Source: RMDB library RNAMAK, as collected in RNAgym. The record gives the reactivity of an RNA of 207 nucleotides to 2A3. The RNA was probed in 150 mM KOAc, 10 mM MgCl2 and 150 mM bicine (pH 8.5) at 24 C. Reactivities are given for positions 27 through 156.

[RMDB]
RNA sequence: GGGAACGACUCGAGUAGAGUCGAAAAGUACAAGAGUUCGCUCUUGUACAAAAAUCCUAAGUCAUCUUGGACCAUCAACAGCGAAGAACUGUCGGAAACGACAGGGAGCUGGGUGCUAGAUGAUAUGGAAAAAAAGGAUAGCGUUCGCGCUAUCCAAUCUAAUUGCGCAGUUCGCUGCGCAAUUAGAAAAAGAAACAACAACAACAAC
Reactivity to 2A3 in 0.01 (KOAc 150mM, MgCl2 10mM, bicine 150mM(pH8.5), 24C), signal-to-noise 2, nucleotides 027 to 156: g000u000a000c000a010a000g000a000g050u070u080c130g090c080u000c000u000u000g000u000a010c000a000a030a000a000a000u000c000c000u040a130a060g030u020c000a000u030c020u050u070g010g110a030c040c000a100u300c110a130a180c010a060g010c000g230a300a000g010a070a030c000u010g010u000c020g000g070a140a060a060c030g000a000c000a000g000g010g010a000g020c010u020g000g010g040u030g140c000u010a000g000a000u000g010a000u020a100u090g020g070a100a180a060a040a020a020a100g000g000a000u020a000g000c000g020u050u060c270g000c010g000c090u020a000u020c010c000a000a010